RNA sequence: GGGAACGACUCGAGUAGAGUCGAAAAGACUUUCGACGUGUCGGCCGUGACGGUUAACGGCACCACUUUCGUUGUAAAGGGGUCCGGUGGUGACAUGAACUUGGGCGGUAGGGACAUUGAUCGUGCGUAAUUCAAACCUAUUCGUAGGUUUGAAUUAAAAAGAAACAACAACAACAAC
Reactivity to DMS in 0.01 (KOAc 150mM, MgCl2 10mM, bicine 150mM(pH8.5), 24C), signal-to-noise 9, nucleotides 027 to 126: g000a090c050u000u000u000c030g020a090c090g020u000g010u000c030g010g010c010c010g010u000g000a170c170g010g000u000u000a080a120c060g000g010c070a050c020c020a030c020u000u000u000c070g010u000u010g010u010a040a080a080g000g000g010g010u000c040c060g010g010u000g000g010u000g010a060c050a070u000g000a040a050c060u000u000g010g010g010c030g000g000u000a080g000g000g000a050c060a050u000u000g010a060u000c050g020u000g010c130g010
Reactivity to 2A3 in 0.01 (KOAc 150mM, MgCl2 10mM, bicine 150mM(pH8.5), 24C), signal-to-noise 9, nucleotides 027 to 126: g040a010c010u080u090u030c040g040a050c030g030u030g020u030c010g030g020c010c010g010u040g060a050c060g020g040u050u090a130a020c010g030g000c050a020c010c010a020c000u060u110u070c100g260u090u180g110u180a060a060a040g030g010g010g000u020c040c020g020g030u040g010g030u040g020a030c020a060u100g040a030a030c030u110u150g030g070g000c040g000g040u070a050g110g060g020a000c010a030u080u180g050a110u050c020g020u060g070c040g070
This 177-nucleotide RNA was probed chemically with DMS and 2A3. Reactivities are given for positions 27 through 126. The data come from the RNA Mapping Database (RMDB), library OK2TRN. Conditions: 150 mM KOAc, 10 mM MgCl2 and 150 mM bicine (pH 8.5), 24 C.